Structure probing data (DMS and 2A3) for a 177-nucleotide construct. For 2A3 the reverse transcriptase was SuperScript II with manganese. Values cover nucleotides 27 to 126. The 2A3 profile rests on 1,403 reads. For DMS the reverse transcriptase was MarathonRT.
RNA sequence: GGGAACGACUCGAGUAGAGUCGAAAACAUCGUGAAUCGUCUACACCGGUAGCCUCGUCGGGGAGACGUCACCACAUGGUUGAGACCCGUCGCCUACCAGGCAGUGCACGUUGAGCACGUACUUGCCCGGAUAGGUGCGUUUCGACGCACCUAUCCGAAAAGAAACAACAACAACAAC
Reactivity to DMS in 0.01 (KOAc 150mM, MgCl2 10mM, bicine 150mM(pH8.5), 24C), signal-to-noise 1, nucleotides 027 to 126: c120a090u000c000g030u000g000a110a200u000c030g000u000c040u100a000c000a210c020c020g000g000u020a110g000c000c040u000c000g000u000c000g000g000g000g000a210g000a070c000g000u000c080a100c080c000a240c190a030u050g000g000u000u060g000a110g000a040c000c000c000g000u000c090g040c300c000u010a050c020c000a000g050g000c070a030g090u000g040c130a010c020g000u000u020g000a150g000c050a080c000g000u000a150c150u000u000g000c020c020
Reactivity to 2A3 in 0.01 (KOAc 150mM, MgCl2 10mM, bicine 150mM(pH8.5), 24C), signal-to-noise 3, nucleotides 027 to 126: c050a060u150c070g030u020g090a050a060u050c050g040u040c000u060a090c060a120c060c000g010g070u060a040g070c000c000u050c090g020u030c000g000g000g040g040a070g070a020c030g060u000c000a030c080c020a060c060a140u300g130g000u060u110g050a030g000a020c000c000c000g010u030c000g050c000c000u050a080c010c100a030g000g000c070a030g020u010g000c010a010c100g020u030u110g050a040g010c030a000c080g020u040a070c040u060u140g020c010c020